[RMDB]
RNA sequence: GGGAACGACUCGAGUAGAGUCGAAAACUCUUGUUAGGUUAAAGUUGAUGGUCGCCGUGUCAGUCCAUGCCUUUGAAAACAGUUCUAUGUAGUAGGGAGUCGAGAACCUAUGAGAGUUAGAACUUGCUAUGCCUUGGACUCUUCGGAGUCCAAGGAAGAUGCGGAACAAGUUCGCUUGUUCCGCAUCAAAAGAAACAACAACAACAAC
Reactivity to 2A3 in 0.01 (KOAc 150mM, MgCl2 10mM, bicine 150mM(pH8.5), 24C), signal-to-noise 1, nucleotides 027 to 156: c020u010c040u060u040g070u030u130a090g030g010u030u120a160a020a000g030u080u040g040a060u050g060g020u010c010g000c000c030g000u000g060u110c030a000g000u010c010c020a040u070g080c040c030u120u050u140g080a070a050a030a060c040a030g010u000u020c020u040a040u030g050u040a030g020u000a000g080g010g020a010g070u090c090g050a020g030a160a060c000c000u030a040u050g030a020g000a000g070u020u050a010g010a010a000c010u030u040g040c140u160a090u200g040c000c030u000u010g000g000a000c000u000c000u000u040c190g060g000a000g000u010c000c000a000a000g000g000a000a010
Reactivity to DMS in 0.01 (KOAc 150mM, MgCl2 10mM, bicine 150mM(pH8.5), 24C), signal-to-noise 2, nucleotides 027 to 156: c030u000c010u000u000g050u000u000a040g000g000u000u000a060a060a100g020u020u000g020a110u000g000g020u000c050g050c020c060g040u000g040u000c030a050g030u010c040c040a060u000g030c050c010u020u000u000g010a070a090a040a060c060a070g000u000u000c020u000a060u010g020u010a290g000u010a080g020g000g010a090g010u010c050g030a170g000a130a110c000c010u010a030u000g000a160g010a200g010u000u010a060g000a030a050c020u000u000g020c010u000a120u000g010c010c010u020u000g010g010a030c000u000c000u000u000c300g040g000a010g010u000c000c010a000a000g000g010a010a000